RNA sequence: GGGAACGACUCGAGUAGAGUCGAAAAUAAAGAUGAUGAAAUGCCUGAUUUGGAAAACAGAGUCUUGGACCAGAUUGGGUUUCUAGACUAAAUACAGUGUGGGAAUACACAAUACACAACCUACUAGAUAGUGCUGGUUAUUCGUAACCAGCACUAUAAAAGAAACAACAACAACAAC
Reactivity to DMS in 0.01 (KOAc 150mM, MgCl2 10mM, bicine 150mM(pH8.5), 24C), signal-to-noise 1, nucleotides 027 to 126: u000a020a110a110g000a080u000g030a200u000g000a110a100a140u000g040c000c000u010g010a030u000u000u000g020g000a040a000a050a160c090a050g000a200g030u010c090u030u030g040g000a190c030c000a040g000a080u000u010g010g000g010u010u000u000c070u000a050g030a080c040u000a030a100a080u020a110c260a020g000u010g000u010g000g000g000a110a150u010a070c090a050c020a040a030u000a040c100a030c080a090a080c060c050u000a020c190u010a070g020